This 177-nucleotide RNA was probed chemically with 2A3 and DMS.
RNA sequence: GGGAACGACUCGAGUAGAGUCGAAAAAGAGCACCUUGAAGGCAUCCGCGAGGACAUGCUGGAGGAUCACCCGGGCCGGCCCGCUGGCGGCGUCCAGGCUGCUCAGCAGGGCGCUCUCGGAAAAGCAGAUAUGGAUAAUAUUCGUAUUAUCCAUAUCAAAAGAAACAACAACAACAAC
Reactivity to 2A3 in 0.01 (KOAc 150mM, MgCl2 10mM, bicine 150mM(pH8.5), 24C), signal-to-noise 6, nucleotides 027 to 126: a010g090a020g020c040a050c050c010u050u060g120a150a060g040g000c010a020u010c020c020g000c040g040a060g010g020a030c030a110u070g000c010u040g010g040a010g020g010a040u060c030a050c030c000c000g000g020g000c040c040g120g030c010c000c000g000c010u020g010g010c000g020g000c010g060u130c110c020a070g180g000c020u020g000c060u080c170a000g000c040a080g000g010g000c010g010c010u010c000u020c000g060g040a050a100a030a020g080c090a050
Reactivity to DMS in 0.01 (KOAc 150mM, MgCl2 10mM, bicine 150mM(pH8.5), 24C), signal-to-noise 9, nucleotides 027 to 126: a070g010a100g020c080a100c020c010u000u000g010a190a120g000g010c020a080u000c010c020g010c280g000a190g000g000a060c140a060u010g000c010u000g000g010a050g000g010a100u000c090a090c090c010c010g010g000g010c300c090g010g000c020c010c020g010c010u000g010g010c020g000g010c020g010u010c200c200a160g000g010c020u000g000c020u010c020a020g010c010a060g040g000g010c020g000c060u000c010u000c020g010g000a060a060a070a110g000c170a110
DMS adducts were read by reverse transcription with MarathonRT.
High 2A3 reactivity points to a flexible backbone, as in loops and unpaired stretches.
Source: RMDB library OK2TST, as collected in RNAgym.
Conditions: 150 mM KOAc, 10 mM MgCl2 and 150 mM bicine (pH 8.5), 24 C.
For 2A3 the reverse transcriptase was SuperScript II with manganese.